[RMDB]
RNA sequence: GGGAACGACUCGAGUAGAGUCGAAAAUCGCGUUGGCUGCCUAAUUCAAGGAAUUAGCGUGCCUUCAUGCUAAGGGUUUGAUAUCUGCUAAAACCCGGUGCAUUGAUCAAUGCAGGUUAAGCCAAAGAAACGGCUCACGAAUUCGUUCGUGAGCCAAGUAAUGUGAACUAUUCGUAGUUCACAUUACAAAAGAAACAACAACAACAAC
Reactivity to 2A3 in 0.01 (KOAc 150mM, MgCl2 10mM, bicine 150mM(pH8.5), 24C), signal-to-noise 6, nucleotides 027 to 156: u090c010g010c030g040u020u030g000g000c010u060g060c040c010u030a040a040u080u050c120a190a130g140g050a080a040u030u030a020g030c040g050u030g010c020c000u010u000c030a030u050g010c010u020a020a040g000g000g010u000u000u010g040a050u050a080u120c060u090g010c050u080a000a020a010a050c000c000c000g000g000u030g000c040a070u020u180g030a030u120c110a120a060u170g010c010a010g030g010u100u190a090a040g000c040c040a070a060a010g110a050a120a020c090g000g000c000u000c000a000c000g010a020a020u110u090c220g040u070u010c000g000u030g080a000g000c000c000a000a000
Reactivity to DMS in 0.01 (KOAc 150mM, MgCl2 10mM, bicine 150mM(pH8.5), 24C), signal-to-noise 4, nucleotides 027 to 156: u000c050g010c070g000u010u010g020g030c020u020g000c090c010u010a040a080u000u000c040a150a220g020g010a120a070u000u000a030g010c050g030u000g020c010c020u000u000c010a070u000g000c010u000a300a210g000g000g000u000u020u010g000a210u000a070u000c070u020g000c120u000a120a040a030a020c000c000c000g010g030u010g030c010a050u000u010g010a090u010c080a070a110u010g000c020a050g020g030u000u000a070a070g000c030c020a040a120a160g010a050a080a140c100g020g010c000u000c010a010c000g020a040a130u000u000c240g010u000u000c020g040u000g010a010g020c000c000a000a040